The record gives the reactivity of an RNA of 177 nucleotides to 2A3 and DMS. For DMS the reverse transcriptase was MarathonRT. Conditions: 150 mM KOAc, 10 mM MgCl2 and 150 mM bicine (pH 8.5), 24 C. The 2A3 profile rests on 1,146 reads. For DMS, 678 sequencing reads were counted.

[RMDB]
RNA sequence: GGGAACGACUCGAGUAGAGUCGAAAAUUUCUUCGACGAGCACAGGUGUGUAUGUAUGCAUACGGACAUACAUACGGGCAUACAUACGUACAUGUAUAUGCACGUGCAUACCUGCAUGUAUACGCCCGGAGUCCGUACCUUUCGAGGUACGGACUCCAAAAGAAACAACAACAACAAC
Reactivity to 2A3 in 0.01 (KOAc 150mM, MgCl2 10mM, bicine 150mM(pH8.5), 24C), signal-to-noise 1, nucleotides 027 to 126: u090u090u000c020u050u060c050g030a010c040g000a010g050c110a040c010a070g000g140u010g000u000g010u020a030u000g050u010a010u000g000c000a040u130a300c040g010g060a080c030a120u280a050c030a020u210a050c010g030g040g000c020a020u000a000c030a030u060a000c040g010u030a060c010a050u000g040u000a030u000a000u140g030c070a000c120g140u230g050c100a040u070a110c010c020u060g000c010a040u030g000u100a100u020a020c020g030c000c000c050
Reactivity to DMS in 0.01 (KOAc 150mM, MgCl2 10mM, bicine 150mM(pH8.5), 24C), signal-to-noise 1, nucleotides 027 to 126: u010u000u010c000u010u000c030g000a140c050g020a170g030c060a150c030a090g000g010u000g010u010g010u000a000u010g020u020a020u000g000c000a070u000a060c090g010g000a140c170a120u000a090c250a110u010a090c010g040g040g000c010a040u010a000c060a020u010a010c050g010u000a000c090a040u010g020u000a060u000a030u000g000c040a150c290g010u000g050c000a010u020a010c100c040u000g050c000a060u010g000u000a060u000a110c170g020c000c000c080